[RMDB]
RNA sequence: GGGAACGACUCGAGUAGAGUCGAAAACAUACAGUUGCACAUAAAAUAAGUGUAGGGGAAUCGAACAUUGAUGAAUCAAGAUCGCUUGUUGCGACUAUUUUAGAUGAAGUGAAGCAAUGGAGAGAUGCUACGUCCACAUAUUCGUAUGUGGACGUAGAAAAGAAACAACAACAACAAC
Reactivity to DMS in 0.01 (KOAc 150mM, MgCl2 10mM, bicine 150mM(pH8.5), 24C), signal-to-noise 6, nucleotides 027 to 126: c060a150u040a120c190a060g020u020u000g000c050a070c050a100u030a050a080a070a120u040a100a110g000u000g020u000a030g000g000g010g010a090a030u000c050g010a080a150c070a060u010u020g000a050u010g010a120a070u000c040a030a070g000a090u010c010g010c020u020u020g010u020u010g010c000g010a120c020u020a060u020u000u020u020a100g000a090u040g000a060a090g030u010g010a110a120g010c020a030a020u000g010g010a080g010a130g000a080u010g000
Reactivity to 2A3 in 0.01 (KOAc 150mM, MgCl2 10mM, bicine 150mM(pH8.5), 24C), signal-to-noise 8, nucleotides 027 to 126: c030a010u280a040c050a070g110u080u060g090c020a020c020a050u260a110a150a110a020u290a300a080g010u020g010u040a050g010g050g010g040a030a030u050c020g020a080a040c010a050u020u060g010a040u060g060a130a040u050c030a040a030g080a170u010c030g020c030u130u270g110u270u230g160c010g010a000c000u090a080u060u170u060u100a100g020a090u090g090a160a060g070u020g110a060a020g000c010a000a020u040g020g040a080g000a010g000a070u060g040

Structure probing data (DMS and 2A3) for a 177-nucleotide construct. For DMS, 12,217 sequencing reads were counted. The 2A3 profile rests on 5,708 reads.